[RMDB]
RNA sequence: GGGAACGACUCGAGUAGAGUCGAAAACAGUCGCGAAGCGUAAAACCGUCAUGUGCGGUGACGAGAUUAAUCGCGGCACUCGGCAGACGACCAUUACGUUUAAAAACAUCGCUGGAGGAAGCAAAAAUAAUAAAUGAUCAUUCGUGAUCAUUUAUUAAAAAGAAACAACAACAACAAC
Reactivity to DMS in 0.01 (KOAc 150mM, MgCl2 10mM, bicine 150mM(pH8.5), 24C), signal-to-noise 9, nucleotides 027 to 126: c100a100g020u000c040g020c030g010a050a100g010c020g000u000a050a050a130a100c070c010g010u000c020a100u010g020u010g020c090g000g010u000g000a020c020g000a090g000a090u010u010a110a090u000c010g010c010g010g000c010a050c030u000c040g010g000c020a040g000a090c060g000a070c090c090a150u000u010a070c060g010u000u000u000a050a070a090a100a090c130a120u000c060g010c020u000g010g000a140g010g000a110a070g010c070a030a060a060a080a120
Reactivity to 2A3 in 0.01 (KOAc 150mM, MgCl2 10mM, bicine 150mM(pH8.5), 24C), signal-to-noise 6, nucleotides 027 to 126: c020a010g030u040c010g020c010g030a050a010g030c010g030u050a040a070a060a090c020c000g010u020c050a220u190g080u130g080c020g020g000u010g010a010c010g010a010g000a120u150u240a130a110u090c010g000c000g030g000c000a030c010u060c020g030g000c020a020g020a080c030g040a070c020c020a040u070u100a030c030g030u030u050u110a110a140a010a010a020c040a060u080c030g000c030u040g020g030a050g020g040a040a020g020c050a050a070a050a010a000
Chemical mapping of a 177-nucleotide RNA with DMS and 2A3. It was measured as part of the RMDB library OK2TRN. The 2A3 profile rests on 12,360 reads. The RNA was probed in 150 mM KOAc, 10 mM MgCl2 and 150 mM bicine (pH 8.5) at 24 C. Reactivities are given for positions 27 through 126. For 2A3 the reverse transcriptase was SuperScript II with manganese. For DMS the reverse transcriptase was MarathonRT.